[RMDB]
RNA sequence: GGGAACGACUCGAGUAGAGUCGAAAAAGCCGGUACGCCGGCAGGGGCAUGAACCUGGCAUACAAUGUAGAUUUCUGUGUUUAUUAGGCAACAGCUACAUUGUCUGCUGGGUUUCAGGCUACCUGAAAGACUUGCUGAUGUUCGCAUCAGCAAGUCUAAAAGAAACAACAACAACAAC
Reactivity to 2A3 in 0.01 (KOAc 150mM, MgCl2 10mM, bicine 150mM(pH8.5), 24C), signal-to-noise 2, nucleotides 027 to 126: a000g050c050c000g000g000u180a150c290g010c080c010g040g000c000a000g000g000g000g000c020a010u000g000a000a000c000c000u000g030g010c000a010u000a000c000a010a010u000g010u000a030g030a150u100u240u000c040u000g070u000g200u080u180u120a300u040u110a140g190g000c040a100a010c000a150g010c000u000a000c000a000u000u000g000u000c030u000g070c010u000g000g030g000u000u050u000c000a000g020g020c000u300a300c020c010u030g010a080a000